[RMDB]
RNA sequence: GGGAACGACUCGAGUAGAGUCGAAAAGCGAUCCAUGAGCUGGCGAGAGGCGACGCGUACUGGGACACCGUCGUGGAGAUCACCAGCAUUGGAGAUCAACAUGUUUUCGAUGGGACUGUAAGCGGCAACGGAGAGUGCAUUUCGAUGCACUCUCCGUAAAAGAAACAACAACAACAAC
Reactivity to 2A3 in 0.01 (KOAc 150mM, MgCl2 10mM, bicine 150mM(pH8.5), 24C), signal-to-noise 2, nucleotides 027 to 126: g070c030g010a000u010c000c040a040u160g080a020g040c020u000g000g000c000g020a090g020a020g040g110c020g020a050c000g070c110g070u160a150c150u210g030g110g080a010c090a010c040c000g060u030c020g000u050g010g040a110g030a040u060c020a040c090c000a010g060c020a030u000u100g030g000a040g000a000u080c000a000a050c020a050u150g050u030u090u080u120c010g000a050u100g010g030g030a050c000u060g000u060a050a000g000c010g070g010c070a010
Reactivity to DMS in 0.01 (KOAc 150mM, MgCl2 10mM, bicine 150mM(pH8.5), 24C), signal-to-noise 1, nucleotides 027 to 126: g030c060g000a050u000c050c000a020u000g110a120g050c000u000g040g120c020g000a040g000a260g030g010c070g000a020c000g140c180g000u020a020c000u000g000g000g030a280c120a100c140c090g050u060c000g000u000g060g050a300g030a120u000c030a100c090c000a040g000c300a000u080u050g000g030a160g000a000u000c090a070a100c190a000u000g050u000u000u000u000c000g000a000u000g000g000g040a040c020u000g000u040a050a190g060c030g000g000c300a180
The record gives the reactivity of an RNA of 177 nucleotides to 2A3 and DMS. DMS adducts were read by reverse transcription with MarathonRT. 2A3 adducts were read by reverse transcription with SuperScript II with manganese. Values are in units of 0.01, from 0 to 300, in steps of 10. Values cover nucleotides 27 to 126. The data come from the RNA Mapping Database (RMDB), library OK1LIB. The 2A3 profile rests on 678 reads. The DMS profile rests on 804 reads.